[RMDB]
Conditions: 150 mM KOAc, 10 mM MgCl2 and 150 mM bicine (pH 8.5), 24 C. The record gives the reactivity of an RNA of 207 nucleotides to 2A3. For 2A3, 315 sequencing reads were counted. Values cover nucleotides 27 to 156. Source: RMDB library OK3TST, as collected in RNAgym.
RNA sequence: GGGAACGACUCGAGUAGAGUCGAAAACGAUGUAUCCACAUCAAAGAACGUAAAAUACAUAUGACAAACAUUGUUGACAGAAACGUGACCUUCAUUCUUACCGUCGUCCAUAAAUACGUUAGGUAUGUACCACAUACUGUCGCGAACGAUGCGUACAAUCGCGACAACCGUUCGCGGUUGUCGCGAUAAAAGAAACAACAACAACAAC
Reactivity to 2A3 in 0.01 (KOAc 150mM, MgCl2 10mM, bicine 150mM(pH8.5), 24C), signal-to-noise 1, nucleotides 027 to 156: c060g000a010u000g000u060a190u080c130c080a000c000a040u080c060a000a260a040g080a140a120c080g060u210a000a230a000a080u150a030c020a050u300a100u300g040a090c090a000a010a080c050a170u110u010g020u180u110g120a020c030a040g040a000a080a000c080g060u000g150a200c000c010u060u030c000a020u040u020c090u030u050a000c000c000g000u000c000g080u010c000c020a030u070a300a020a000u260a140c050g020u100u150a000g000g000u000a000u050g090u160a230c000c000a050c080a090u040a010c000u030g000u010c030g000c000g010a080a000c000g000a000u020g000c040g060u000a000c060a010